[RMDB]
RNA sequence: GGGAACGACUCGAGUAGAGUCGAAAACUGCCUCUCCCUGUCGGUGAAUCCUCCCCUGAGAGGCCUCUUCCUAGGUCCGGAGUCUACCUCCAUCUGGUCUGUUCGGGCCCUCUUCGCCGGGGGGGCUACAGGAUGGGCUUCGGCCCAUCCAAAAGAAACAACAACAACAAC
Reactivity to DMS in 0.01 (KOAc 150mM, MgCl2 10mM, bicine 150mM(pH8.5), 24C), signal-to-noise 2, nucleotides 027 to 129: c130u050g000c000c000u020c000u020c000c000c000u010g010u040c000g040g020u040g060a090a100u040c040c020u010c000c000c030c120u020g030a050g020a050g020g000c040c070u000c060u030u010c070c060u010a050g010g020u020c020c030g050g000a000g000u000c090u040a180c000c000u020c030c040a140u020c080u010g030g010u000c040u040g030u000u000c000g010g040g050c050c010c000u000c030u040u000c180g000c070c000g080g000g030g050g030g000g070c100u030a060c040a100
Reactivity to 2A3 in 0.01 (KOAc 150mM, MgCl2 10mM, bicine 150mM(pH8.5), 24C), signal-to-noise 3, nucleotides 027 to 129: c030u080g020c000c030u040c040u020c000c000c000u090g190u100c040g000g060u040g060a040a140u110c020c000u030c120c050c030c000u000g020a030g010a030g020g000c000c010u030c000u020u030c040c000u010a030g000g000u070c060c020g000g030a010g000u020c050u080a110c000c000u010c000c000a050u000c030u060g040g020u030c000u000g030u080u110c000g000g050g020c010c000c030u020c010u070u110c030g040c000c050g000g000g000g000g000g010g000c000u010a030c000a040